[RMDB]
This 207-nucleotide RNA was probed chemically with 2A3.
RNA sequence: GGGAACGACUCGAGUAGAGUCGAAAACGUCGUGUUCGCACGACGAAAAAGCGUACUACGUCCUUUUGACGAUGCGGCAUGGGAGUCCCAAAUAGGACAUCGAUCAUGUCAGCGCAUCGAUAAGGACGUAUCGCAAAAAUGAUGGUUCGCCAUCAAAAGCAAUUAACGAGUUCGCUCGUUAAUUGCUAAAAGAAACAACAACAACAAC
Reactivity to 2A3 in 0.01 (KOAc 150mM, MgCl2 10mM, bicine 150mM(pH8.5), 24C), signal-to-noise 1, nucleotides 027 to 156: c000g000u000c000g000u020g000u000u040c030g030c090a000c010g000a000c010g050a000a000a000a030a000g050c020g000u030a030c050u000a010c020g000u020c000c000u080u000u030u130g200a100c040g000a000u000g020c000g000g000c000a000u000g060g000g000a050g000u020c010c040c000a070a300a110u250a140g010g010a010c000a170u150c100g050a030u010c010a010u000g050u000c050a010g130c110g000c090a020u000c000g030a050u020a100a000g000g000a020c000g010u000a000u000c020g040c000a130a000a000a000a000u050g000a000u000g000g020u080u020c300g020c080c000a000u040c000a030a060a090